Annotation: The data come from the RNA Mapping Database (RMDB), library OK2TST. Structure probing data (DMS and 2A3) for a 177-nucleotide construct. For DMS the reverse transcriptase was MarathonRT. Values are in units of 0.01, from 0 to 300, in steps of 10. For 2A3, 798 sequencing reads were counted.

[RMDB]
RNA sequence: GGGAACGACUCGAGUAGAGUCGAAAAGGGGUCUGUUCGAUGGUCACGAACCCUGCCGCAUAGCCGUCUACCUGAAGAGUUCCGAAAUCGUAGAGGAUGUGGAGUCGGUUGGGGGAAAGGGUGGCGAGCCCGGUCAAGGGUUCGCCCUUGACCGGGCAAAAGAAACAACAACAACAAC
Reactivity to DMS in 0.01 (KOAc 150mM, MgCl2 10mM, bicine 150mM(pH8.5), 24C), signal-to-noise 2, nucleotides 027 to 126: g020g010g030g030u000c110u000g020u030u000c100g030a100u010g030g010u000c040a130c070g020a110a170c010c030c040u000g000c030c030g040c040a060u020a120g000c050c010g000u000c000u000a040c020c070u020g000a120a060g020a190g000u000u000c060c050g000a130a050a120u000c140g020u000a030g010a210g000g000a070u010g000u030g000g020a150g000u010c060g000g020u000u000g010g000g000g000g010a070a090a170g000g000g010u010g020g000c120g000a050
Reactivity to 2A3 in 0.01 (KOAc 150mM, MgCl2 10mM, bicine 150mM(pH8.5), 24C), signal-to-noise 1, nucleotides 027 to 126: g000g000g010g000u080c030u020g030u060u000c010g000a120u100g070g040u110c060a000c070g030a030a030c000c020c000u000g000c010c010g000c090a060u030a060g080c010c020g150u090c010u080a210c020c020u080g040a110a050g000a050g120u110u110c020c020g010a040a040a050u120c100g030u050a030g000a040g030g020a070u030g040u050g110g030a090g040u120c020g090g000u000u130g040g020g000g020g020a150a030a070g020g000g010u070g000g060c030g060a020